[RMDB]
RNA sequence: GGGAACGACUCGAGUAGAGUCGAAAAUUAAACAUGGUUACCAAAACCUAAGGCACAAGGUAGCCAUGAAGUGCCUUAGUUAAAUAAAAGCUGAGCGUUAGGAAAAACCUAAUGCUCACCAAAAAAACAAUGUGUGUUCUUUCGAGAACACACAUUGAAAAGAAACAACAACAACAAC
Reactivity to 2A3 in 0.01 (KOAc 150mM, MgCl2 10mM, bicine 150mM(pH8.5), 24C), signal-to-noise 1, nucleotides 027 to 126: u080u050a050a070a020c040a010u080g010g010u010u010a030c020c000a140a090a000a140c010c040u030a030a090g050g000c000a010c020a110a050g050g020u020a000g040c010c020a010u050g000a030a010g030u010g000c000c000u030u070a080g050u080u160a180a040a030u190a100a150a080a040g080c070u010g000a000g000c000g030u020u010a020g000g000a030a100a070a130a140c000c000u000a010a010u000g010c000u020c000a010c000c000a010a080a000a000a010a000a010
Reactivity to DMS in 0.01 (KOAc 150mM, MgCl2 10mM, bicine 150mM(pH8.5), 24C), signal-to-noise 1, nucleotides 027 to 126: u000u000a080a070a200c040a010u010g000g000u000u000a070c010c010a060a070a050a050c110c010u000a080a030g030g000c010a000c020a070a120g000g010u000a030g020c080c030a040u010g000a080a060g010u000g000c020c010u010u000a090g000u000u000a040a030a130u010a040a100a080a050g020c240u020g000a010g000c010g020u000u000a000g000g010a060a170a080a120a100c010c000u000a000a000u000g000c000u000c000a040c080c020a000a000a100a030a030a100a020